[RMDB]
Structure probing data (2A3) for a 177-nucleotide construct. The RNA was probed in 150 mM KOAc, 10 mM MgCl2 and 150 mM bicine (pH 8.5) at 24 C. For 2A3, 1,270 sequencing reads were counted.
RNA sequence: GGGAACGACUCGAGUAGAGUCGAAAACGGCUCAGUAUAACACCUAUAUCUACCCACUUUUUAAAUAUAACCAUGGUAAACUAUGGCUAAUAUAGUGGAUGAGUGGGUGACCUAUCAGCUUGACGGUGAAGCUGUAAGGCUUCGGCCUUACAGCUUCAAAAGAAACAACAACAACAAC
Reactivity to 2A3 in 0.01 (KOAc 150mM, MgCl2 10mM, bicine 150mM(pH8.5), 24C), signal-to-noise 2, nucleotides 027 to 126: c010g060g000c000u020c070a030g060u110a030u020a150a060c000a020c000c000u010a010u000a110u060c030u060a070c000c000c000a000c000u030u080u030u070u200a140a180a040u240a030u010a010a000c000c000a010u000g000g090u090a110a090a040c030u030a020u020g000g000c000u000a070a000u090a050u030a030g040u010g010g000a020u010g000a000g010u020g000g010g000u000g020a010c010c000u020a030u070c030a010g050c030u090u100g080a030c050g060g000u090